[RMDB]
An RNA of 207 nucleotides, treated with DMS and 2A3 and read out base by base.
RNA sequence: GGGAACGACUCGAGUAGAGUCGAAAAUAUCCAUAUCAUCGAUUAAUCGUCGUCGCGUCUCAGUCGGUUUGAGAACACUAUCAAUAAAUCCACGAUCAGCGGCAGUGUAUGGAUUUGCGAAUUCUUCACGAUAUUCUUCGAUUAAUUCAUCACGGCGACAUAAGUUGUUUUUCGAAACAACUUAUGUAAAAGAAACAACAACAACAAC
Reactivity to DMS in 0.01 (KOAc 150mM, MgCl2 10mM, bicine 150mM(pH8.5), 24C), signal-to-noise 6, nucleotides 027 to 156: u000a100u000c020c030a140u000a100u000c090a120u000c050g010a130u000u000a090a070u000c050g030u010c110g030u000c030g020c030g020u000c030u000c040a090g010u000c060g030g000u000u000u000g010a120g000a070a110c050a070c070u000a210u000c060a070a130u000a050a050a100u000c020c030a040c040g000a100u000c040a080g000c050g010g020c030a060g020u010g020u000a030u000g010g010a050u000u000u000g000c070g000a070a130u000u000c020u000u000c060a110c060g010a100u000a070u000u010c060u010u010c030g010a110u000u000a020a080u010u000c030a060u010c040a050c040g020g020c020g030
Reactivity to 2A3 in 0.01 (KOAc 150mM, MgCl2 10mM, bicine 150mM(pH8.5), 24C), signal-to-noise 9, nucleotides 027 to 156: u140a030u010c020c020a040u070a050u150c080a050u090c040g100a070u040u170a120a040u090c030g060u010c010g010u010c010g010c030g080u020c030u000c080a090g050u080c070g030g030u020u040u060g070a060g020a060a020c070a030c090u160a120u150c030a050a010u070a170a080a020u030c030c020a040c070g040a050u050c050a030g010c000g060g000c040a040g020u000g020u070a030u040g000g010a000u000u000u080g030c030g020a020a030u050u030c020u110u140c080a050c130g040a050u060a070u240u070c050u050u040c000g050a070u060u110a040a040u070u070c020a030u060c020a030c060g080g010c030g040